[RMDB]
An RNA of 207 nucleotides, treated with DMS and 2A3 and read out base by base.

RNA sequence: GGGAACGACUCGAGUAGAGUCGAAAAAGUUCUAGUCCUCACCUAAGAUCAGACUUACAAGGCCCUCAAAGAAAGAGCACUGGGUUGGGCUUUGUGGUGGGGAUGAGUGUCUCAUUUUUAGUCCCAAAUUAAAAACGAGAUUUUGGGCUGUACAUCACUAUUAAUACGCGUUCGCGCGUAUUAAUAGAAAAGAAACAACAACAACAAC
Reactivity to DMS in 0.01 (KOAc 150mM, MgCl2 10mM, bicine 150mM(pH8.5), 24C), signal-to-noise 1, nucleotides 027 to 156: a070g000u010u000c030u000a210g020u000c010c000u000c030a030c030c000u010a050a080g010a130u000c000a100g020a130c030u010u000a110c050a100a100g130g000c000c000c010u000c050a040a120a170g000a140a080a110g000a120g010c030a040c060u010g000g030g020u010u000g050g010g020c020u010u010u000g030u000g010g040u000g000g000g040g000a010u000g010a080g010u000g010u010c010u030c020a110u000u000u000u000u030a100g010u010c080c100c100a050a070a100u010u010a020a030a030a060a030c020g020a040g000a100u000u000u020u010g010g000g000c080u000g030u010a030c070a210u000c060a250
Reactivity to 2A3 in 0.01 (KOAc 150mM, MgCl2 10mM, bicine 150mM(pH8.5), 24C), signal-to-noise 2, nucleotides 027 to 156: a000g030u050u010c010u020a010g020u010c000c000u000c000a000c010c010u100a110a050g020a190u170c070a100g170a210c050u060u050a030c020a010a000g010g000c010c010c000u040c080a170a210a050g110a060a120a030g100a040g030c030a010c120u090g220g010g020u080u050g020g000g030c000u000u000u020g040u010g000g000u000g000g000g000g000a000u010g000a010g010u050g060u000c000u020c050a070u070u140u080u050u220a010g070u160c010c010c010a000a040a010u070u060a070a030a020a020a020c110g030a060g020a150u040u020u010u050g010g000g000c010u030g050u050a080c020a070u060c030a030
For DMS the reverse transcriptase was MarathonRT.